About this RNA
An RNA of 207 nucleotides, treated with DMS and 2A3 and read out base by base. Conditions: 150 mM KOAc, 10 mM MgCl2 and 150 mM bicine (pH 8.5), 24 C. DMS adducts were read by reverse transcription with MarathonRT. For 2A3 the reverse transcriptase was SuperScript II with manganese.
RNA sequence: GGGAACGACUCGAGUAGAGUCGAAAAGGGUUUUGCGAUCUUUAAGCAGAUGGCAGGUUCGCCCCGUACGGUGCGGAAGUUCGCGCUUCCGUGAAACGCGAAAAUCGGACGGUGGCUGCAAGUCGCAUUGAAGGGAUCGCCUUCGGGCGAUCCCUAAUCAUUGUGUAAUCUUCGGAUUACACAAUGAAAAAGAAACAACAACAACAAC
Reactivity to DMS in 0.01 (KOAc 150mM, MgCl2 10mM, bicine 150mM(pH8.5), 24C), signal-to-noise 1, nucleotides 027 to 156: g030g000g020u000u000u020u040g010c010g000a030u000c070u000u000u000a120a250g020c120a060g000a110u000g020g030c010a090g000g010u000u010c140g000c000c000c000c020g050u020a020c050g000g050u000g030c020g020g010a060a070g010u000u000c180g000c300g000c020u000u000c010c050g060u000g010a040a060a040c060g030c040g000a060a050a070a080u010c030g020g010a030c020g000g000u000g010g020c050u020g040c050a080a170g040u000c040g010c020a150u000u000g000a100a110g000g030g000a040u000c020g000c010c000u000u000c300g090g050g010c000g020a000u000c010c000c030u000a010a010
Reactivity to 2A3 in 0.01 (KOAc 150mM, MgCl2 10mM, bicine 150mM(pH8.5), 24C), signal-to-noise 2, nucleotides 027 to 156: g100g000g020u080u110u080u010g000c030g000a020u070c060u060u190u080a120a070g010c020a020g020a140u150g060g030c050a050g030g040u100u180c010g030c010c010c000c000g000u000a000c010g000g000u030g000c000g000g010a010a030g030u090u290c090g000c040g000c120u000u000c020c000g000u020g060a100a070a010c110g030c020g100a020a040a000a040u040c000g000g000a000c010g030g130u180g070g000c010u020g000c010a030a060g070u050c040g000c070a060u030u080g060a030a030g000g020g000a010u020c020g000c010c000u020u050c110g050g010g000c000g000a000u000c000c000c000u000a000a000